[RMDB]
RNA sequence: GGGAACGACUCGAGUAGAGUCGAAAACACAUGAAUUCCAAAACCACACUCUGCUUUUGAACAACAUGUGACAGCUGGAGACUAAUGUACUUGUUUGGGGAAACACUUGGGGAAUAAUAUUCUCCUGCUGGAGCAUACUAUUCGUAGUAUGCUCCAGAAAAGAAACAACAACAACAAC
Reactivity to DMS in 0.01 (KOAc 150mM, MgCl2 10mM, bicine 150mM(pH8.5), 24C), signal-to-noise 4, nucleotides 027 to 126: c050a080c060a060u010g010a110a140u010u010c070c010a070a010a040a130c080c040a040c120a060c130u010c050u010g030c060u000u000u000u010g000a080a060c120a060a100c030a040u000g000u000g000a130c120a040g030c040u000g000g020a090g010a040c080u000a040a090u000g020u000a040c110u010u000g030u000u010u000g000g000g000g000a130a040a070c080a040c130u000u000g010g030g000g010a040a020u000a040a050u020a300u000u000c020u000c000c010u000g000
Reactivity to 2A3 in 0.01 (KOAc 150mM, MgCl2 10mM, bicine 150mM(pH8.5), 24C), signal-to-noise 1, nucleotides 027 to 126: c060a000c030a040u130g080a120a070u100u100c010c010a000a000a030a050c010c000a040c000a000c090u120c040u010g060c010u040u070u070u000g030a040a030c020a000a020c020a160u130g020u040g070a010c020a000g030c020u060g030g030a050g040a050c030u110a220a050u060g010u070a120c030u110u100g140u050u130u130g010g010g010g010a050a080a020c110a050c120u090u050g020g000g000g020a010a020u090a150a010u100a090u090u020c010u030c010c020u020g000